[RMDB]
RNA sequence: GGGAACGACUCGAGUAGAGUCGAAAAGAUAUGGAAUUUAGAGGUCGACCGAAGGGCGAUAAGUCACGGUCGGAAACGACCGAAUGACUUUUGACGCCUUUUUGGUCGACCUCUAAAUUCCUAAGUCGUAUAUCUGUGUGUUCGCACACAGAUAUACAAAAGAAACAACAACAACAAC
Reactivity to DMS in 0.01 (KOAc 150mM, MgCl2 10mM, bicine 150mM(pH8.5), 24C), signal-to-noise 1, nucleotides 027 to 126: g000a080u000a300u000g020g010a020a000u000u000u000a010g010a000g000g030u000c000g000a020c010c000g000a020a000g000g020g010c020g000a090u000a010a040g000u000c010a070c020g000g000u000c000g010g010a050a110a290c020g000a050c000c000g010a090a120u000g010a010c000u010u000u000u010g010a270c060g030c000c000u000u000u000u000u000g080g010u000c030g010a000c010c000u040c000u000a000a000a000u000u000c000c020u000a020a070g000u000c120
An RNA of 177 nucleotides, treated with DMS and read out base by base. The RNA was probed in 150 mM KOAc, 10 mM MgCl2 and 150 mM bicine (pH 8.5) at 24 C. Reactivities are rounded to 0.1 and cut off at 0 and 3. Source: RMDB library TTRINS, as collected in RNAgym. The DMS profile rests on 1,514 reads.